The record gives the reactivity of an RNA of 177 nucleotides to 2A3. Reactivities are rounded to 0.1 and cut off at 0 and 3. For 2A3, 656 sequencing reads were counted. It was measured as part of the RMDB library OK1LIB.
RNA sequence: GGGAACGACUCGAGUAGAGUCGAAAAUGUCCAUGCGUCUUUGGCGGUUACCGUCGCUCAAUGCAUGUGGGAGAAACUGACCGAGCUUUUUCACCAUUCCGAGAGAUUGCAGUCUACGGUGAUCACGGAGGGCUCAUGGAUUCGUCCAUGAGCCCUCAAAAGAAACAACAACAACAAC
Reactivity to 2A3 in 0.01 (KOAc 150mM, MgCl2 10mM, bicine 150mM(pH8.5), 24C), signal-to-noise 2, nucleotides 027 to 126: u140g040u040c000c000a010u000g000c020g070u090c040u050u080u100g040g060c030g010g010u000u060a080c020c000g010u010c000g050c010u060c090a030a160u120g150c070a000u070g000u110g010g110g000a090g010a100a030a010c020u140g020a040c110c080g060a010g020c050u040u040u070u120u100c080a080c090c000a120u160u060c010c000g210a120g000a000g030a170u040u030g050c100a070g020u000c010u050a010c000g000g000u000g020a060u060c030a020c070g040